[RMDB]
RNA sequence: GGGAACGACUCGAGUAGAGUCGAAAAGGCACUAUCUUCGGAUAGUGCCAAAACGGGAAAACGGCCUCCCGAAAAGAAAUGAUCGAAACGAUCAAAAGGCCGAAAUCUCCCGGUUCGCCGGGAGAAACUCACUAUUGAUGUUCGCAUCAAUAGUGAGAAAAGAAACAACAACAACAAC
Reactivity to 2A3 in 0.01 (KOAc 150mM, MgCl2 10mM, bicine 150mM(pH8.5), 24C), signal-to-noise 1, nucleotides 027 to 126: g010g000c000a000c000u000a000u000c000u020u040c090g000g000a000u000a010g000u000g010c000c000a000a000a000a000c000g000g000g000a000a050a030a060c000g010g000c000c010u020c000c000c000g030a070a080a010a010g090a030a120a050u070g000a000u010c020g080a300a150a250c140g010a010u010c000a000a040a080a000g000g000c000c000g000a010a000a000u010c000u000c000c000c010g000g030u030u030c240g030c020c000g010g010g000a000g010a000a000a000
Reactivity to DMS in 0.01 (KOAc 150mM, MgCl2 10mM, bicine 150mM(pH8.5), 24C), signal-to-noise 2, nucleotides 027 to 126: g030g030c020a000c000u000a000u000c000u000u010c160g000g000a020u000a010g000u010g020c010c010a000a000a040a220c010g000g010g040a030a060a060a200c020g000g000c000c010u000c000c010c000g000a050a060a060a080g020a060a090a080u000g000a020u000c000g010a080a110a100c150g010a000u010c000a020a020a100a100g020g020c000c000g020a010a070a170u000c000u010c000c010c000g000g000u000u000c210g020c010c010g020g010g000a000g010a000a030a090
Notes: This 177-nucleotide RNA was probed chemically with 2A3 and DMS. Source: RMDB library M2PK50, as collected in RNAgym. The RNA was probed in 150 mM KOAc, 10 mM MgCl2 and 150 mM bicine (pH 8.5) at 24 C. DMS (dimethyl sulfate) methylates the pairing face of unpaired adenines and cytosines. For 2A3 the reverse transcriptase was SuperScript II with manganese.